[RMDB]
The record gives the reactivity of an RNA of 177 nucleotides to DMS. Values are in units of 0.01, from 0 to 300, in steps of 10. For DMS the reverse transcriptase was MarathonRT. Values cover nucleotides 27 to 126. The RNA was probed in 150 mM KOAc, 10 mM MgCl2 and 150 mM bicine (pH 8.5) at 24 C.
RNA sequence: GGGAACGACUCGAGUAGAGUCGAAAAUGUUUUCUCACAAGCGAUGAAAGUGGAAAAGAGGGUGAGCAGGUGGCCCACACAUGUGCCUCCAGUGCUGCGGCCCCUCCGGGGACCAUCAGCCAGGCCCUACGGCACAUCCUUUCGAGGAUGUGCCGUAAAAAGAAACAACAACAACAAC
Reactivity to DMS in 0.01 (KOAc 150mM, MgCl2 10mM, bicine 150mM(pH8.5), 24C), signal-to-noise 1, nucleotides 027 to 126: u020g000u000u010u030u000c010u010c050a070c100a120a170g010c090g020a100u000g030a100a070a050g000u020g010g020a090a040a020a140g010a050g030g000g010u000g020a190g020c040a060g010g010u000g010g000c010c040c040a100c110a070c060a030u020g000u010g000c000c000u010c070c050a110g000u000g030c010u000g010c300g010g000c000c000c000c000u010c220c080g050g030g020g000a020c000c000a040u000c030a010g000c010c060a170g020g050c040c020c050